[RMDB]
RNA sequence: GGGAACGACUCGAGUAGAGUCGAAAAAUAGUGAAAACCUGUUUUUAAAGGAAUACAAUCUUGCUGGAAAGCAUGGAAGUAGGAAAUUUGAUUUAAACGAGUACCGCCAAUACAAUCUUUUGCCGAAAUGGCGUCAUUUAUUCGUAAAUGACGCCAUAAAAGAAACAACAACAACAAC
Reactivity to DMS in 0.01 (KOAc 150mM, MgCl2 10mM, bicine 150mM(pH8.5), 24C), signal-to-noise 1, nucleotides 027 to 126: a000u010a000g040u020g000a100a100a220a200c110c030u010g000u000u000u000u010u000a070a070a150g010g000a130a250u000a010c100a100a050u000c070u010u000g000c000u000g010g050a120a090a020g000c000a030u010g030g000a090a260g050u000a030g000g050a090a020a000u010u030u000g000a030u000u000u000a050a160a160c070g000a060g020u000a010c140c020g010c010c020a100a060u000a070c160a000a100u010c010u000u000u000u000g040c070c100g010a010a000